An RNA of 177 nucleotides, treated with DMS and 2A3 and read out base by base. Reactivities are rounded to 0.1 and cut off at 0 and 3.
RNA sequence: GGGAACGACUCGAGUAGAGUCGAAAAGAAAGGAUUCUUACAGGACACUAUGUUCUUCCAGGACAGAACAUUCUUUGCUAUUUUGUACUGGAAGAACAUGCAAAACUUUAAAAAAAGUUAUUGCUAAAUCAAGCAACUGUUUCGACAGUUGCUUGAUAAAAGAAACAACAACAACAAC
Reactivity to DMS in 0.01 (KOAc 150mM, MgCl2 10mM, bicine 150mM(pH8.5), 24C), signal-to-noise 2, nucleotides 027 to 126: g020a070a070a100g020g000a110u000u030c010u010u010a120c090a080g030g020a160c250a100c040u040a010u010g000u000u000c000u000u010c010c000a000g000g020a000c000a010g000a010a000c090a040u030u050c180u040u010u020g000c230u050a120u000u010u000u000g000u010a010c000u000g010g020a000a000g020a000a000c000a000u000g000c010a010a000a050a020c000u000u050u010a010a000a120a110a030a010a010g000u000u000a060u000u000g000c020u000a030a080
Reactivity to 2A3 in 0.01 (KOAc 150mM, MgCl2 10mM, bicine 150mM(pH8.5), 24C), signal-to-noise 4, nucleotides 027 to 126: g100a000a080a020g130g040a190u100u040c080u110u180a100c090a070g110g030a010c000a030c130u070a050u070g000u000u000c000u010u000c000c000a010g000g000a000c020a010g050a000a000c040a040u230u070c090u190u200u200g070c020u050a120u040u020u040u010g000u000a000c000u000g000g000a000a000g000a000a000c000a000u000g000c000a000a000a010a020c010u050u100u240a040a290a070a030a020a000a000g030u040u000a250u130u040g000c000u050a180a130